[RMDB]
RNA sequence: GGGAACGACUCGAGUAGAGUCGAAAAACACGAGUCAGCUCAGACUUGUGCGAGUACCGAUUCUGCAAUCGGUGCAGAGUCUAGUCUACGCUGACUGGACUAGUAAGUGAUUGCAGAAUCACUUGCAGCACUGGAAUCUAUUCGUAGAUUCCAGUGCAAAAGAAACAACAACAACAAC
Reactivity to 2A3 in 0.01 (KOAc 150mM, MgCl2 10mM, bicine 150mM(pH8.5), 24C), signal-to-noise 2, nucleotides 027 to 126: a000c020a000c040g000a000g000u010c010a000g080c110u040c170a050g020a030c000u030u010g020u020g020c030g000a010g020u020a020c000c040g010a010u020u000c000u010g010c010a010a030u010c030g210g060u060g000c050a040g010a010g270u020c020u020a010g010u000c020u050a060c220g050c290u040g100a000c010u000g010g020a000c000u000a030g080u060a030a220g200u040g120a000u000u020g020c010a000g020a010a000u010c000a000c020u030u090g010c080a060
Reactivity to DMS in 0.01 (KOAc 150mM, MgCl2 10mM, bicine 150mM(pH8.5), 24C), signal-to-noise 2, nucleotides 027 to 126: a090c020a040c010g010a010g000u000c000a150g010c190u020c300a120g010a010c020u000u010g000u000g000c010g010a130g010u000a120c070c060g010a010u000u000c060u000g010c080a030a020u000c000g010g010u000g020c020a110g010a160g000u000c000u010a010g000u010c000u000a120c300g010c220u000g000a000c000u000g000g000a030c020u000a040g010u000a060a070g020u000g000a010u000u000g000c050a030g000a010a010u000c010a040c080u010u000g010c100a150
Chemical mapping of a 177-nucleotide RNA with 2A3 and DMS. 2A3 adducts were read by reverse transcription with SuperScript II with manganese. The 2A3 profile rests on 3,141 reads. Conditions: 150 mM KOAc, 10 mM MgCl2 and 150 mM bicine (pH 8.5), 24 C.